[RMDB]
RNA sequence: GGGAACGACUCGAGUAGAGUCGAAAACUUCUGGGAAGAUAGUUCCUCUCUUCAACGUCUCUCGCGUCUUUGAAAAUUUGAGCUUCUUCUGGUUCUCUUGCAACUUCUGUUGGAGGCAAAACGGGUACAUUUUGUUCAACAUGUGGCCCCAGGUGUACCCGGUUAGGUAAUUCGUUACCUAACCGGGAAAAGAAACAACAACAACAAC
Reactivity to 2A3 in 0.01 (KOAc 150mM, MgCl2 10mM, bicine 150mM(pH8.5), 24C), signal-to-noise 1, nucleotides 027 to 156: c050u180u060c060u140g030g010g000a010a090g010a000u120a090g010u010u020c010c010u000c050u010c000u050u060c060a040a020c070g060u030c030u020c040u070c130g070c050g060u000c060u120u040u050g100a060a080a060a090u040u170u080g000a040g020c010u020u060c030u020u100c070u120g020g000u130u000c000u000c000u050u050g060c060a110a130c060u130u010c010u090g000u060u070g000g000a000g000g030c000a010a010a010a010c050g000g000g000u030a030c010a070u100u140u020u130g030u170u160c100a100a060c050a190u050g000u080g110g030c010c000c020c000a000g160g000u020g000u070a040